An RNA of 177 nucleotides, treated with 2A3 and DMS and read out base by base.
For DMS the reverse transcriptase was MarathonRT.
The 2A3 profile rests on 1,848 reads.
It was measured as part of the RMDB library OK2TST.
[RMDB]
RNA sequence: GGGAACGACUCGAGUAGAGUCGAAAAGAGGAGCGCGUCCAGAAGGGUGACUGCAUCGGGAGCCUCCCACCGGGCGAUCUCCUGGAGUUCAUAGGUGAUAGUGAGGCAGAGGCUUGCCCCCGGUGCCCUUGCACUAGUCAUUCGUGACUAGUGCAAGAAAAGAAACAACAACAACAAC
Reactivity to 2A3 in 0.01 (KOAc 150mM, MgCl2 10mM, bicine 150mM(pH8.5), 24C), signal-to-noise 2, nucleotides 027 to 126: g110a020g040g040a030g010c160g020c050g130u000c020c010a030g070a080a050g080g040g030u080g040a100c080u090g020c010a030u060c030g000g020g010a010g020c000c000u010c010c000c020a000c000c010g030g140g000c030g030a030u010c010u010c000c040u040g110g030a070g050u030u190c060a070u190a100g040g000u030g040a030u060a110g070u140g120a020g020g000c020a030g040a010g170g090c070u100u070g000c030c000c000c000c050g000g030u000g000c000c000
Reactivity to DMS in 0.01 (KOAc 150mM, MgCl2 10mM, bicine 150mM(pH8.5), 24C), signal-to-noise 3, nucleotides 027 to 126: g010a090g010g010a040g020c120g000c050g010u010c030c020a120g010a100a150g000g000g020u010g010a130c120u010g010c090a100u010c060g020g030g010a210g020c000c020u000c010c010c050a080c020c020g000g000g010c050g010a040u010c020u000c000c030u000g000g000a160g010u000u000c090a120u010a050g020g010u000g000a050u000a060g000u000g020a110g000g010c120a080g000a110g000g030c070u000u000g000c030c020c020c010c010g000g000u000g000c030c160